[RMDB]
RNA sequence: GGGAACGACUCGAGUAGAGUCGAAAACGGUUACGCCUUCUUUACCGUUAUCAAGGAAGGUACUCGGCCAUGCUAAUGGAAGCAUUAUUCCUUAGGCGCAUGUCGCCGCCAGCAUGGUGUGAGGGGAAAAAGUAUGCUGGGUUCGCCCAGCAUACAACACUAAUCAUGGGUUCGCCCAUGAUUAGUGAAAAGAAACAACAACAACAAC
Reactivity to 2A3 in 0.01 (KOAc 150mM, MgCl2 10mM, bicine 150mM(pH8.5), 24C), signal-to-noise 8, nucleotides 027 to 156: c000g000g020u030u030a040c070g010c000c000u000u000c000u020u020u030a030c010c020g290u110u100a050u090c080a010a000g040g000a000a000g010g010u050a060c010u000c000g030g000c000c000a000u000g000c010u080a110a050u080g010g010a020a000g040c100a230u110u130a160u180u120c010c000u050u120a090g010g000c010g010c060a170u270g110u300c030g020c050c000g010c030c010a000g000c000a000u010g010g030u060g130u170g000a050g020g020g020g080a010a130a040a020a020g000u000a000u000g000c000u000g010g010g020u030u040c090g080c020c000c000a000g000c000a000u000a000c000a000a000
Reactivity to DMS in 0.01 (KOAc 150mM, MgCl2 10mM, bicine 150mM(pH8.5), 24C), signal-to-noise 2, nucleotides 027 to 156: c040g010g020u000u000a010c030g000c020c000u000u000c000u000u000u000a020c020c020g000u000u000a020u000c120a010a020g020g020a040a000g000g000u010a040c010u000c010g000g070c010c000a020u000g000c010u000a100a120u000g020g010a050a030g020c190a180u000u010a220u000u000c010c020u010u010a120g020g010c000g030c040a170u000g010u010c060g060c020c000g000c100c090a050g020c020a010u010g020g030u000g010u000g000a100g000g020g030g020a070a060a130a110a160g010u000a000u000g010c000u010g030g000g020u010u010c300g020c000c000c000a020g020c000a000u000a000c010a050a130